[RMDB]
RNA sequence: GGGAACGACUCGAGUAGAGUCGAAAACAGAAGGAAUUCUCCAAUUUAGGGUGAGCUUAGGGUGAGCUCAAAGCUCAAUGAGGCCUCCAGGUCUGCCAUUUUCCAGGAGCUUGUACUUCACAGCUGCCUCUGACCACCUCCCUGCCCAGGGUAGCUGGAUAACGAAACACUUCGGUGUUUCGUUAUCAAAAGAAACAACAACAACAAC
Reactivity to DMS in 0.01 (KOAc 150mM, MgCl2 10mM, bicine 150mM(pH8.5), 24C), signal-to-noise 1, nucleotides 027 to 156: c080a130g000a160a070g000g000a110a090u000u000c000u000c010c030a130a160u010u000u000a080g030g000g040u010g010a050g010c040u030u000a130g060g010g080u000g010a040g000c010u010c090a040a100a110g010c030u000c050a040a070u010g010a090g040g010c020c030u000c060c000a070g000g040u000c000u010g030c030c010a160u000u000u000u000c070c030a200g020g000a130g030c070u010u010g030u010a060c010u000u000c050a260c000a110g000c000u010g000c010c010u000c060u000g010a130c080c010a060c000c060u000c010c010c000u010g000c130c010c030a180g100g020g010u000a050g030c050u000g030
Reactivity to 2A3 in 0.01 (KOAc 150mM, MgCl2 10mM, bicine 150mM(pH8.5), 24C), signal-to-noise 1, nucleotides 027 to 156: c060a010g090a090a030g070g050a030a030u080u060c030u050c040c030a070a130u070u070u220a110g040g000g000u000g030a020g000c010u020u020a030g120g000g010u100g100a040g000c020u020c050a040a020a040g000c000u010c010a060a080u090g010a030g040g000c020c010u080c090c080a020g010g010u010c000u070g050c000c030a080u110u030u070u000c050c030a010g000g050a020g030c050u060u070g050u100a070c010u050u100c050a000c000a010g000c030u000g030c010c000u200c020u060g030a060c030c000a030c050c010u020c000c000c010u030g030c020c040c010a010g040g000g000u030a010g010c000u000g030
The record gives the reactivity of an RNA of 207 nucleotides to DMS and 2A3. The reactions ran in a buffer of 150 mM KOAc, 10 mM MgCl2 and 150 mM bicine (pH 8.5), at 24 C. DMS adducts were read by reverse transcription with MarathonRT. The DMS profile rests on 1,656 reads. Values cover nucleotides 27 to 156.